[RMDB]
RNA sequence: GGGAACGACUCGAGUAGAGUCGAAAAGAUAUGGACGAUGAGCUUGGACCUGGUCGGUCGGAAACGACCGCCAGCUAGCUUAAGUCCUAAGUCAAAACAUCUAUUCGGCUUCGGCCGAAUAGAUGAACAAGAUCAAAAACUUCGGUUUUUGAUCUUGAAAAGAAACAACAACAACAAC
Reactivity to DMS in 0.01 (KOAc 150mM, MgCl2 10mM, bicine 150mM(pH8.5), 24C), signal-to-noise 3, nucleotides 027 to 126: g020a050u010a300u000g000g000a010c000g010a190u010g000a000g010c000u010u000g030g010a180c300c010u000g010g000u010c040g040g010u000c000g010g000a040a050a120c010g010a000c000c000g010c010c000a000g010c050u000a020g000c000u010u000a070a300g000u000c000c000u020a050a100g000u010c030a110a070a140a230c010a010u000c000u000a010u000u000c010g010g010c000u000u010c270g040g020c000c000g000a000a000u000a000g010a000u010g010a080a120
Reactivity to 2A3 in 0.01 (KOAc 150mM, MgCl2 10mM, bicine 150mM(pH8.5), 24C), signal-to-noise 2, nucleotides 027 to 126: g020a020u060a040u110g000g000a000c010g070a120u300g020a030g030c040u180u250g140g060a270c040c010u030g000g020u300c170g030g000u000c020g050g000a050a070a000c010g000a010c000c010g000c000c000a000g010c010u020a020g000c000u030u010a040a020g000u000c000c010u010a040a000g050u020c030a040a010a080a210c010a020u000c000u010a000u010u000c010g000g000c000u060u080c300g130g000c000c000g010a000a000u000a000g000a000u000g000a000a000
Structure probing data (DMS and 2A3) for a 177-nucleotide construct. The 2A3 profile rests on 3,021 reads. DMS adducts were read by reverse transcription with MarathonRT. Values cover nucleotides 27 to 126. Source: RMDB library TTRDEL, as collected in RNAgym.